[RMDB]
RNA sequence: GGGAACGACUCGAGUAGAGUCGAAAAGAUAUGGACUACCCACCGAUUGAACUACUCGUACGGACUCGGAAACGAGUCCGACACGAGCAAUCGAGGUCCUAAGUCAAAACUCCGCUUCGGCGGAGAACAGUUAUAUUUACUUCGGUAAAUAUAACUGAAAAGAAACAACAACAACAAC
Reactivity to DMS in 0.01 (KOAc 150mM, MgCl2 10mM, bicine 150mM(pH8.5), 24C), signal-to-noise 5, nucleotides 027 to 126: g000a070u000a190u010g000g010a030c000u000a100c010c020c010a300c130c010g000a020u000u000g000a040a060c080u000a300c020u000c000g030u000a080c010g010g020a010c010u000c010g000g000a070a080a120c010g000a020g020u000c000c000g010a020c090a020c010g000a010g000c000a000a010u000c000g000a180g010g000u010c000c000u000a070a130g010u010c060a070a090a150a130c000u000c000c010g010c020u000u010c180g050g020c000g010g010a000g000a020a080
Reactivity to 2A3 in 0.01 (KOAc 150mM, MgCl2 10mM, bicine 150mM(pH8.5), 24C), signal-to-noise 3, nucleotides 027 to 126: g030a020u120a100u200g000g010a010c010u120a190c030c020c000a010c000c010g020a010u000u020g010a050a020c040u090a020c000u290c010g020u010a010c010g010g000a010c010u000c000g020g020a060a070a050c010g010a000g000u000c000c000g020a000c000a000c010g020a000g000c000a010a000u000c010g020a010g020g000u000c010c000u010a280a030g060u060c050a000a000a120a210c000u020c010c000g030c010u050u120c300g180g000c000g000g000a000g000a010a000